[RMDB]
RNA sequence: GGGAACGACUCGAGUAGAGUCGAAAAAGAAAGGGGACUGUUGACAGCAGGGGGAAAGGCUAUCAAAAACGCCCCCGAAAUUCUAGCCUUGCUGACCGCGGUCUGGCUACCUAAACGGGUGGCUGUGAUGCAUUGCAAGGGACACCAGAAAGACGAACACCAGUGCAGUGUUCGCACUGCACUGGUGAAAAGAAACAACAACAACAAC
Reactivity to 2A3 in 0.01 (KOAc 150mM, MgCl2 10mM, bicine 150mM(pH8.5), 24C), signal-to-noise 1, nucleotides 027 to 156: a000g150a030a040a000g000g010g010g010a010c050u020g040u080u040g030a010c000a020g020c010a030g000g010g000g030g030a050a100a070g010g040c040u040a050u110c090a060a040a030a070a130c030g050c000c000c010c010c040g020a050a030a000u140u070c030u040a040g030c010c010u010u030g000c020u030g010a090c000c150g000c010g050g030u000c000u010g020g000c000u010a020c010c000u060a200a140a040c090g010g010g010u010g000g020c000u000g070u020g010a000u020g030c030a050u060u100g000c020a000a000g030g010g030a000c040a040c110c070a000g100a050a060a030g170a040c130g060a050a000

Conditions: 150 mM KOAc, 10 mM MgCl2 and 150 mM bicine (pH 8.5), 24 C. The record gives the reactivity of an RNA of 207 nucleotides to 2A3. It was measured as part of the RMDB library OK3TST. 2A3 adducts were read by reverse transcription with SuperScript II with manganese.